RNA sequence: GGGAACGACUCGAGUAGAGUCGAAAAGACUUUGGCUUUUAUUCUGUGAGGGCUGUGAGCAGGGAGAAACGUGAAUUGACUGUGCUGAACUGCUGCAUUAACAGUAGAGUAUGGCCAAGCAUUGGGUGGCUCACACCUGUAAUCCCAGCACUCGGGGCGUCAUUAUUUCAUUCGUGAAAUAAUGACGAAAAGAAACAACAACAACAAC
Reactivity to DMS in 0.01 (KOAc 150mM, MgCl2 10mM, bicine 150mM(pH8.5), 24C), signal-to-noise 2, nucleotides 027 to 156: g020a110c030u000u000u020g010g080c020u030u000u020u000a100u010u000c040u040g020u010g010a110g040g040g000c060u010g040u010g000a100g020c020a080g000g000g010a200g000a100a080a080c060g020u030g010a100a150u000u010g010a050c030u000g010u010g020c010u010g010a090a170c020u000g030c040u000g050c080a140u000u000a090a040c000a050g030u000a070g030a120g020u020a030u000g000g000c000c000a000a120g020c070a130u000u020g000g000g060u000g040g030c130u000c090a040c040a090c020c000u000g000u000a080a130u000c010c010c030a130g020c050a040c060u000c020g020g020g040g000
Reactivity to 2A3 in 0.01 (KOAc 150mM, MgCl2 10mM, bicine 150mM(pH8.5), 24C), signal-to-noise 5, nucleotides 027 to 156: g060a030c030u110u080u110g030g020c030u140u100u070u120a100u160u070c060u110g150u060g080a050g020g040g000c040u020g010u020g040a020g040c020a030g000g050g010a080g060a060a100a040c100g040u050g060a050a130u070u070g040a050c010u030g020u060g030c010u040g050a140a050c010u010g020c000u010g000c030a180u100u210a150a070c010a010g020u020a010g020a020g030u050a040u090g020g000c020c020a010a010g000c010a010u060u150g080g040g000u060g070g000c000u020c070a030c000a020c010c000u000g020u020a040a020u020c020c020c010a000g010c030a020c020u030c030g020g000g020g000